Chemical mapping of a 207-nucleotide RNA with 2A3.
RNA sequence: GGGAACGACUCGAGUAGAGUCGAAAAUUACUAUUCGUAGUAAACUUAUGGGGUCACUGGAGGAUCGGCCAACAGCUAUACUGAAGCCUCCACGGUAUAGACAUGGGCGAUCCGUUGAAAGUGACGGAGGCACCCUGAUAUCACUCUUCGGAGUGAAGCAUACGGACGGAUUCGUCCGUCCGUAUGCAAAAGAAACAACAACAACAAC
Reactivity to 2A3 in 0.01 (KOAc 150mM, MgCl2 10mM, bicine 150mM(pH8.5), 24C), signal-to-noise 1, nucleotides 027 to 156: u060u020a070c020u020a010u190u000c160g110u070a040g000u000a000a260a060c080u210u240a120u300g000g000g000g000u010c020a020c040u020g010g030a070g000g000a020u000c000g120g060c080c000a100a060c070a270g040c010u000a010u000a010c000u030g000a150a000g030c000c000u000c000c020a050c000g010g050u020a030u000a000g120a220c050a230u130g000g000g000c020g000a010u000c000c010g000u000u060g070a050a000a000g040u020g010a010c010g000g000a010g000g010c000a020c020c010c000u040g030a050u050a040u260c020a020c020u000c000u040u150c290g100g010a000g010u030g000a020a000
Conditions: 150 mM KOAc, 10 mM MgCl2 and 150 mM bicine (pH 8.5), 24 C.